Conditions: 150 mM KOAc, 10 mM MgCl2 and 150 mM bicine (pH 8.5), 24 C. Chemical mapping of a 207-nucleotide RNA with DMS and 2A3. For DMS, 9,864 sequencing reads were counted. Source: RMDB library M2RFOK, as collected in RNAgym. DMS adducts were read by reverse transcription with MarathonRT.

RNA sequence: GGGAACGACUCGAGUAGAGUCGAAAAUACUUAGUACGCGCGUAGUUGCAAGCAUUCCGGGUGCAGCAACUGACGCGGAAGACUUUUCCCAGAGUGUGCGCUUCAACUGGCGUGCUGAGUAGUGCACGAAUUGCACGUACGUUCGCGUACGUGCAAAGAUGCGCAACGAGUUCGCUCGUUGCGCAUCAAAAGAAACAACAACAACAAC
Reactivity to DMS in 0.01 (KOAc 150mM, MgCl2 10mM, bicine 150mM(pH8.5), 24C), signal-to-noise 3, nucleotides 027 to 156: u010a060c080u020u000a070g020u000a050c000g020c010g040c020g000u000a040g040u010u000g010c000a120a080g000c000a020u000u000c020c300g000g020g110u000g000c020a300g020c010a030a010c010u010g010a010c000g000c000g010g010a080a060g020a090c100u000u000u000u000c010c020c000a110g010a110g020u000g030u000g010c020g000c010u000u000c030a030a140c080u000g010g010c030g020u000g010c000u000g010a070g020u000a070g080u000g020c010a070c050g010a120a220u000u000g000c020a020c000g000u000a010c000g010u000u010c300g040c020g020u000a000c000g010u000g000c000a000a000a020
Reactivity to 2A3 in 0.01 (KOAc 150mM, MgCl2 10mM, bicine 150mM(pH8.5), 24C), signal-to-noise 4, nucleotides 027 to 156: u120a010c020u020u020a010g000u030a030c030g000c010g010c010g060u010a000g000u010u000g010c020a100a090g000c010a010u090u030c060c160g170g040g000u010g000c010a010g000c000a010a000c000u070g100a020c000g000c000g010g000a020a000g100a020c020u070u060u040u000c010c010c000a020g010a020g040u090g020u010g000c010g010c010u040u090c050a150a130c070u050g020g000c020g010u020g000c010u010g010a090g030u140a020g070u070g050c020a010c040g020a030a080u010u010g000c000a000c000g000u000a000c000g020u030u050c160g000c010g070u000a000c000g000u000g010c000a000a010a000